[RMDB]
RNA sequence: GGGAACGACUCGAGUAGAGUCGAAAAAACUGUCAAACUGGCCUUGAGUACAGUACAACUCGUGUUCUUGGGUAUUUGGCACCUUCAAGAAGCUUGGCAUAUUCGUGAGUGAAUAAUCACUGUCAUACUACACUCACUGAUUCGUCAGUGAGUGUAGAAAAGAAACAACAACAACAAC
Reactivity to 2A3 in 0.01 (KOAc 150mM, MgCl2 10mM, bicine 150mM(pH8.5), 24C), signal-to-noise 4, nucleotides 027 to 126: a000a000c070u050g010u040c050a080a040a050c090u030g150g050c000c000u010u050g010a000g030u050a020c020a040g010u030a070c050a110a060c060u050c090g020u020g000u040u040c000u020u050g100g000g070u050a060u030u040u020g020g000c020a030c010c000u030u090c060a090a050g070a070a060g060c050u060u050g020g000c030a040u060a090u150u110c060g030u060g140a040g020u120g050a060a070u170a100a060u060c010a020c060u020g060u040c010a010u030a140
Reactivity to DMS in 0.01 (KOAc 150mM, MgCl2 10mM, bicine 150mM(pH8.5), 24C), signal-to-noise 4, nucleotides 027 to 126: a060a060c210u000g010u000c030a020a060a060c220u000g010g010c070c030u010u010g020a060g020u000a050c060a060g040u010a100c220a090a080c050u000c110g000u010g010u000u010c030u000u000g000g000g000u000a050u000u010u000g010g000c040a040c080c040u010u000c070a030a110g000a050a090g000c100u010u000g000g010c030a100u000a090u000u000c040g010u000g030a070g030u010g000a050a100u000a060a120u000c070a050c090u000g010u000c050a070u000a170